[RMDB]
RNA sequence: GGGAACGACUCGAGUAGAGUCGAAAAGCCGUCACGCUCGCACACUUAUCGUGGACGGAGCCGAAGUCCUGGUCACGGAAGGAGCAGCGGACCGGGAGAUAGACGAAGCCCAAAUCGCGGCGAACGAUCGUUUUAAAUACUUCGGUAUUUAAAACGAAAAAGAAACAACAACAACAAC
Reactivity to DMS in 0.01 (KOAc 150mM, MgCl2 10mM, bicine 150mM(pH8.5), 24C), signal-to-noise 7, nucleotides 027 to 126: g010c040c010g020u010c050a140c090g020c040u000c090g030c120a190c070a120c050u000u000a090u000c090g020u000g000g010a050c050g010g010a110g020c020c110g010a120a140g010u010c010c000u000g010g000u000c010a070c030g010g010a110a060g000g010a100g020c040a080g020c030g010g000a050c050c020g000g000g000a040g000a070u000a080g000a070c040g000a110a160g010c010c000c010a070a080a100u000c070g010c040g010g000c040g010a070a060c110g010a120
Reactivity to 2A3 in 0.01 (KOAc 150mM, MgCl2 10mM, bicine 150mM(pH8.5), 24C), signal-to-noise 8, nucleotides 027 to 126: g030c040c000g010u030c030a030c100g020c010u060c050g060c010a030c000a020c070u130u190a160u300c080g010u020g020g100a030c040g080g020a030g020c020c050g100a070a020g060u030c000c010u030g010g000u040c050a060c220g030g030a090a050g060g040a080g020c030a010g050c030g010g000a000c000c000g000g040g010a060g020a030u150a030g060a030c040g050a060a020g040c000c000c010a030a090a020u090c060g000c040g010g020c010g010a040a020c040g040a060